[RMDB]
RNA sequence: GGGAACGACUCGAGUAGAGUCGAAAAAGGAAGUCGCAGCCCCUGCCCACGGCUUCCCCAGCUCGCUGGGGUUGGAGGACUGUCAUCAGUUGUCCCCAGUUAAAGUCCAUUUGGAGGAGGUUCAGGGCCUAGCCAAUAUAUUCGUAUAUUGGCUAGGAAAAGAAACAACAACAACAAC
Reactivity to DMS in 0.01 (KOAc 150mM, MgCl2 10mM, bicine 150mM(pH8.5), 24C), signal-to-noise 9, nucleotides 027 to 126: a080g000g000a030a020g010u000c020g010c040a070g000c040c010c010c020u000g000c020c010c010a090c060g010g000c010u000u000c000c000c030c080a090g010c050u000c180g010c050u000g010g010g010g010u000u000g010g010a150g000g000a020c010u000g000u010c220a160u010c030a040g010u000u000g000u000c010c000c000c020a060g000u000u010a070a090a070g010u000c020c020a170u010u010u000g000g000a140g000g010a050g010g000u010u000c090a090g010g000g010
Reactivity to 2A3 in 0.01 (KOAc 150mM, MgCl2 10mM, bicine 150mM(pH8.5), 24C), signal-to-noise 5, nucleotides 027 to 126: a020g030g000a010a000g010u030c010g010c030a030g030c030c000c000c020u010g000c010c010c000a010c010g000g000c000u010u020c000c000c000c000a030g010c030u080c090g060c040u040g000g020g050g000u030u080g070g070a090g090g050a010c010u010g070u150c080a280u100c010a080g020u040u050g060u090c010c010c000c000a000g000u040u110a120a080a010g020u010c030c010a070u090u080u210g100g020a140g040g060a040g050g000u060u120c030a020g030g010g000
Structure probing data (DMS and 2A3) for a 177-nucleotide construct. Values are in units of 0.01, from 0 to 300, in steps of 10. The RNA was probed in 150 mM KOAc, 10 mM MgCl2 and 150 mM bicine (pH 8.5) at 24 C. For 2A3, 8,084 sequencing reads were counted. DMS adducts were read by reverse transcription with MarathonRT. Source: RMDB library OK2TST, as collected in RNAgym. For DMS, 29,882 sequencing reads were counted.